Chemical mapping of a 177-nucleotide RNA with DMS and 2A3. It was measured as part of the RMDB library OK2TRN.
RNA sequence: GGGAACGACUCGAGUAGAGUCGAAAAUGCUGCAUAUCGCCUUUCGCCCCGACGGGCAGCAGGUCUGGCUACCGCAACCUUACUGGAACGGCGUCACCGUUCAUGAUUUACGCCAUAACGACGCUGACCAGAUGAAGCAGUUCGCUGCUUCAUCUGGAAAAGAAACAACAACAACAAC
Reactivity to DMS in 0.01 (KOAc 150mM, MgCl2 10mM, bicine 150mM(pH8.5), 24C), signal-to-noise 2, nucleotides 027 to 126: u000g030c020u000g030c070a070u000a110u000c090g000c030c010u000u000u000c150g000c050c020c010c070g020a110c150g030g000g000c030a030g010c040a040g010g000u000c060u010g010g000c040u010a040c110c060g030c060a060a080c070c060u000u010a100c100u000g010g010a040a170c060g000g000c070g000u020c120a190c070c080g000u010u010c130a030u000g000a140u020u020u000a100c170g000c070c020a030u010a080a060c100g000a060c060g020c030u000g000a210
Reactivity to 2A3 in 0.01 (KOAc 150mM, MgCl2 10mM, bicine 150mM(pH8.5), 24C), signal-to-noise 1, nucleotides 027 to 126: u050g010c000u040g000c020a020u060a100u300c090g070c020c000u040u160u120c090g050c000c000c000c020g080a120c070g000g070g010c000a010g040c040a030g050g020u000c020u050g040g000c040u040a050c070c000g000c020a080a020c030c020u100u150a060c070u160g110g050a150a050c020g000g010c020g000u040c020a030c080c050g010u060u040c050a020u080g030a050u050u160u140a090c070g000c000c070a030u050a070a060c080g030a000c000g060c030u000g020a060